This 207-nucleotide RNA was probed chemically with DMS and 2A3.
For 2A3 the reverse transcriptase was SuperScript II with manganese.
The RNA was probed in 150 mM KOAc, 10 mM MgCl2 and 150 mM bicine (pH 8.5) at 24 C.
RNA sequence: GGGAACGACUCGAGUAGAGUCGAAAAACUGGGAAGUCGGAUUCGUCCGACUUCCCAGUAAACUAAGAAAUUCACGGCGGGCUUGAUGUCCGCGUCUACCUGGUUCACUGCCGUGUAGGCAGAAAGAGAAUAGAGUUCUUUCGAGAACUCUAUUCUCGACACAUAUGUGGUUCGCCACAUAUGUGUCAAAAGAAACAACAACAACAAC
Reactivity to DMS in 0.01 (KOAc 150mM, MgCl2 10mM, bicine 150mM(pH8.5), 24C), signal-to-noise 1, nucleotides 027 to 156: a070c000u000g000g000g010a050a000g030u010c040g030g020a100u010u000c270g010u000c010c000g000a000c000u000u000c010c000c000a000g000u010a000a110a120c090u000a070a150g000a090a080a100u020u000c050a040c030g010g010c090g020g030g000c000u000u040g000a070u000g000u000c030c010g030c020g050u000c010u000a070c070c000u000g020g010u000u000c040a180c020u000g020c040c000g010u000g020u000a100g020g030c040a020g010a020a050a120g010a050g010a010a050u000a000g000a060g010u000u000c000u000u000u000c240g010a050g030a010a000c000u000c000u000a010u010u000c000u000c000
Reactivity to 2A3 in 0.01 (KOAc 150mM, MgCl2 10mM, bicine 150mM(pH8.5), 24C), signal-to-noise 1, nucleotides 027 to 156: a010c010u020g000g000g000a010a000g000u000c000g040g000a030u080u050c200g010u010c070c000g020a030c000u000u010c000c000c000a010g000u000a000a020a000c000u000a000a030g020a020a070a000u290u180c120a000c090g100g000c040g000g020g000c010u160u220g140a090u300g040u010c030c000g010c030g010u020c010u020a030c010c020u080g060g000u150u150c060a070c060u050g000c000c000g060u140g090u080a020g000g000c000a000g060a000a050a000g010a020g000a000a000u000a000g000a000g000u000u030c050u090u160u160c280g060a000g000a030a000c000u010c000u000a000u000u000c000u000c010